[RMDB]
RNA sequence: GGGAACGACUCGAGUAGAGUCGAAAAACGGACGAGCACGGCACUCCAUUGUUGGUACAGGCAGAUAAAGAAGGCGUUUCAGUCAAGGAGCUUGCUGACCGCUACAACCGGCAGAUCGUUGAAGACCACUUAGCUCAACAUUCGUGUUGAGCUAAGUAAAAGAAACAACAACAACAAC
Reactivity to DMS in 0.01 (KOAc 150mM, MgCl2 10mM, bicine 150mM(pH8.5), 24C), signal-to-noise 5, nucleotides 027 to 126: a070c060g000g010a090c090g000a130g010c040a100c050g020g010c070a090c060u010c030c040a080u010u000g010u010u000g000g000u000a060c100a070g010g010c060a050g000a080u010a060a060a100g000a110a090g000g010c020g000u000u010u000c030a040g010u010c050a030a070g010g000a150g010c070u000u000g000c020u000g000a070c300c040g000c030u010a080c100a070a100c140c050g000g000c060a080g000a040u000c090g020u010u000g000a070a060g010a140c060c060
Reactivity to 2A3 in 0.01 (KOAc 150mM, MgCl2 10mM, bicine 150mM(pH8.5), 24C), signal-to-noise 2, nucleotides 027 to 126: a010c030g040g030a020c020g010a020g010c050a010c080g000g040c040a010c030u020c010c000a110u040u090g060u060u070g070g010u080a050c030a050g050g000c020a010g020a110u160a090a130a050g110a070a050g050g000c030g010u040u140u030c030a020g040u020c010a010a070g070g010a070g150c030u020u030g000c020u050g010a100c040c000g000c020u060a060c040a050a020c020c010g010g000c010a010g010a060u060c040g020u040u070g040a060a000g050a050c020c010